Chemical mapping of a 177-nucleotide RNA with 2A3 and DMS. The DMS profile rests on 7,771 reads. The data come from the RNA Mapping Database (RMDB), library OK2TRN. The RNA was probed in 150 mM KOAc, 10 mM MgCl2 and 150 mM bicine (pH 8.5) at 24 C.

RNA sequence: GGGAACGACUCGAGUAGAGUCGAAAACGUGGCGGGCACCCGGCUCGGCCAGGCUCGCACCGCCGUGGGCGGCGUGGCGGGCACCCGGCUCGGCCAGGCUCGCACCGCCGUGGGCGGCGUGGCGGGCACUUAAUCGCGUAUUCGUACGCGAUUAAGUAAAAGAAACAACAACAACAAC
Reactivity to 2A3 in 0.01 (KOAc 150mM, MgCl2 10mM, bicine 150mM(pH8.5), 24C), signal-to-noise 2, nucleotides 027 to 126: c040g050u070g010g020c020g040g010g000c030a100c040c080c030g150g000c020u030c030g110g040c000c000a040g060g040c000u020c000g000c020a030c010c010g030c000c010g000u080g080g200g050c050g010g010c000g010u020g010g000c010g000g020g030c010a060c010c070c050g000g050c100u150c150g150g000c010c010a020g030g000c000u000c020g000c000a010c010c000g020c010c010g010u040g060g130g000c040g020g000c040g010u020g000g030c030g010g000g000c010
Reactivity to DMS in 0.01 (KOAc 150mM, MgCl2 10mM, bicine 150mM(pH8.5), 24C), signal-to-noise 3, nucleotides 027 to 126: c160g010u000g020g020c010g010g010g020c010a130c060c050c050g010g000c010u000c120g010g020c010c020a110g020g000c010u010c010g000c010a030c060c010g010c000c010g030u010g000g010g000c030g000g010c010g010u000g000g000c010g000g000g000c040a020c100c100c060g000g010c020u010c190g010g000c010c020a120g000g000c050u000c040g010c000a010c030c000g010c010c000g050u010g000g010g020c050g010g000c020g020u010g010g000c030g000g000g000c030